[RMDB]
Source: RMDB library OK2TRN, as collected in RNAgym. Chemical mapping of a 177-nucleotide RNA with 2A3 and DMS.
RNA sequence: GGGAACGACUCGAGUAGAGUCGAAAAAUGUGAUCGAUAGCUCACGGAUCUCACAUGUACACUCAUGUAGUGAUGCACUAGUACUGCUAGACGAUCGAUCUAGAGCUAGGCCAUGGUCUAGGUACUGGCAACAUCCAGCUUUCGAGCUGGAUGUUGCAAAAGAAACAACAACAACAAC
Reactivity to 2A3 in 0.01 (KOAc 150mM, MgCl2 10mM, bicine 150mM(pH8.5), 24C), signal-to-noise 1, nucleotides 027 to 126: a060u150g080u120g010a000u060c030g010a000u070a030g000c010u070c030a040c110g040g030a050u010c030u050c040a010c010a100u030g070u100a100c190a080c080u000c000a120u140g030u120a100g010u060g060a090u120g000c030a030c080u010a000g070u120a150c060u190g120c010u010a070g000a120c030g080a170u060c080g000a030u000c010u010a010g030a030g120c040u000a010g010g000c000c000a060u190g050g000u080c010u020a000g040g110u100a130c100u100g080
Reactivity to DMS in 0.01 (KOAc 150mM, MgCl2 10mM, bicine 150mM(pH8.5), 24C), signal-to-noise 1, nucleotides 027 to 126: a120u000g030u000g000a030u000c040g020a040u000a060g030c040u010c040a100c110g040g000a100u000c040u000c020a120c080a050u000g010u000a020c260a060c130u000c110a180u020g000u010a110g010u000g020a150u000g020c110a160c080u040a010g000u010a090c080u010g000c030u000a040g010a060c110g010a050u000c130g010a130u000c040u010a060g000a260g000c070u000a000g000g000c000c060a080u000g010g030u010c060u000a020g000g060u000a020c100u000g000
The reactions ran in a buffer of 150 mM KOAc, 10 mM MgCl2 and 150 mM bicine (pH 8.5), at 24 C. 2A3 adducts were read by reverse transcription with SuperScript II with manganese.